[RMDB]
RNA sequence: GGGAACGACUCGAGUAGAGUCGAAAACGAGGGGACCGUCCCCUCGGUAAUGGCGAAUGGGACCCAGAACUCUCUCUAGCUUCCCAGAGAGAAGCGAGAGAAAACUGGCUCUCCCUUAGCCAUCCGAGUAAUGUGAUGAGUUCGCUCAUCACAUUACAAAAGAAACAACAACAACAAC
Reactivity to DMS in 0.01 (KOAc 150mM, MgCl2 10mM, bicine 150mM(pH8.5), 24C), signal-to-noise 3, nucleotides 027 to 126: c020g000a050g000g000g000g010a230c300c300g000u000c010c010c000c000u000c000g000g000u030a030a060u010g000g000c010g020a190a110u000g000g010g000a020c270c000c000a030g000a090a290c260u000c010u010c000u010c020u010a200g020c000u000u000c000c020c090a100g010a110g010a090g000a000a000g000c000g010a020g000a010g000a010a010a100a130c010u000g000g000c000u000c100u000c000c000c000u000u000a290g000c000c030a010u010c010c020g000a130
Reactivity to 2A3 in 0.01 (KOAc 150mM, MgCl2 10mM, bicine 150mM(pH8.5), 24C), signal-to-noise 1, nucleotides 027 to 126: c020g000a030g030g020g010g010a050c110c080g300u260c010c000c020c000u000c000g000g000u020a010a010u010g000g000c010g010a040a000u020g000g000g000a010c040c000c010a000g010a060a050c020u040c000u020c000u030c060u080a060g000c000u010u000c030c040c170a100g070a000g010a010g000a150a000g000c000g000a000g000a000g000a010a020a010a020c010u000g010g000c000u000c000u000c010c000c010u000u000a000g000c000c000a010u000c010c020g050a060

Overview
Chemical mapping of a 177-nucleotide RNA with DMS and 2A3. The DMS profile rests on 1,462 reads. The reactions ran in a buffer of 150 mM KOAc, 10 mM MgCl2 and 150 mM bicine (pH 8.5), at 24 C. Values cover nucleotides 27 to 126. In probing experiments dimethyl sulfate is read out at A N1 and C N3, which are open when not base-paired. Values are in units of 0.01, from 0 to 300, in steps of 10.